An RNA of 177 nucleotides, treated with DMS and 2A3 and read out base by base. For DMS the reverse transcriptase was MarathonRT. High 2A3 reactivity points to a flexible backbone, as in loops and unpaired stretches. The DMS profile rests on 2,437 reads.

[RMDB]
RNA sequence: GGGAACGACUCGAGUAGAGUCGAAAACUGGAAUGAUGAUGCUUAGCCAAAUCAGAUAUGUGCUCCAAGAGGCAUUUUUCUGUGGAACCUUGUUCAGCAGAUGGUGUGCCUCUUGUUGUAGUGCGUCUUUGUUCUGCUACUUCGGUAGCAGAACAAAAAAAGAAACAACAACAACAAC
Reactivity to DMS in 0.01 (KOAc 150mM, MgCl2 10mM, bicine 150mM(pH8.5), 24C), signal-to-noise 2, nucleotides 027 to 126: c060u020g000g000a090a100u000g000a090u000g010a070u060g000c080u020u040a050g020c140c040a050a210a050u030c090a070g010a170u040a060u030g070u030g000c000u000c000c000a010a010g000a000g000g000c000a000u020u050u020u020u030c000u000g010u010g000g030a000a000c030c300u020u060g000u000u000c000a130g000c010a000g000a000u010g010g050u060g020u000g000c000c000u000c000u000u000g000u000u000g010u040a010g070u000g030c040g000u010c120
Reactivity to 2A3 in 0.01 (KOAc 150mM, MgCl2 10mM, bicine 150mM(pH8.5), 24C), signal-to-noise 3, nucleotides 027 to 126: c010u060g060g030a070a040u040g020a080u040g040a070u080g020c030u080u100a040g030c070c010a050a020a100u060c020a020g070a080u160a090u220g000u010g010c000u000c000c000a000a000g010a000g000g000c000a000u110u030u000u000u000c000u010g020u090g080g020a000a000c060c150u190u290g010u030u010c030a000g000c000a000g000a010u050g000g100u050g000u010g070c010c000u000c000u000u000g000u020u070g010u050a000g010u000g010c010g030u000c000